Record summary:
Chemical mapping of a 177-nucleotide RNA with 2A3 and DMS. DMS adducts were read by reverse transcription with MarathonRT. It was measured as part of the RMDB library TTRDES. For 2A3 the reverse transcriptase was SuperScript II with manganese. The RNA was probed in 150 mM KOAc, 10 mM MgCl2 and 150 mM bicine (pH 8.5) at 24 C.
[RMDB]
RNA sequence: GGGAACGACUCGAGUAGAGUCGAAAAGAUAUGGACAAGGUAGGGCGAUAAGACGCUGUCGGAAACGACAGGCGUCUUUUGACGCCUCUCCUUGUCCUAAGUCAAAAGGAUUACUUCGGUAAUCCAAGGUAUCUAAAUGGUUCGCCAUUUAGAUACCAAAAGAAACAACAACAACAAC
Reactivity to 2A3 in 0.01 (KOAc 150mM, MgCl2 10mM, bicine 150mM(pH8.5), 24C), signal-to-noise 3, nucleotides 027 to 126: g010a000u040a020u100g010g010a010c010a000a000g040g010u090a050g060g130g040c070g100a130u060a300a000g000a000c000g020c010u010g020u010c010g000g030a060a040a020c010g000a000c000a000g040g030c000g000u010c010u010u010u010u020g030a020c080g000c000c000u010c000u020c010c000u010u000g000u000c000c000u000a000a000g020u000c020a010a020a060a190g000g000a000u000u010a000c000u020u120c300g140g010u010a020a000u000c000c000a000a030
Reactivity to DMS in 0.01 (KOAc 150mM, MgCl2 10mM, bicine 150mM(pH8.5), 24C), signal-to-noise 2, nucleotides 027 to 126: g000a030u000a290u010g000g000a030c000a010a000g000g020u010a080g010g020g010c000g010a140u000a020a010g010a020c010g020c000u000g010u000c010g010g010a080a060a140c010g010a010c010a020g030g010c000g020u000c000u010u000u010u000g010a240c110g000c000c000u000c080u000c000c000u000u010g000u000c000c000u000a010a050g010u000c030a100a090a170a130g020g000a010u000u000a000c010u000u010c220g030g000u010a000a000u000c000c000a050a060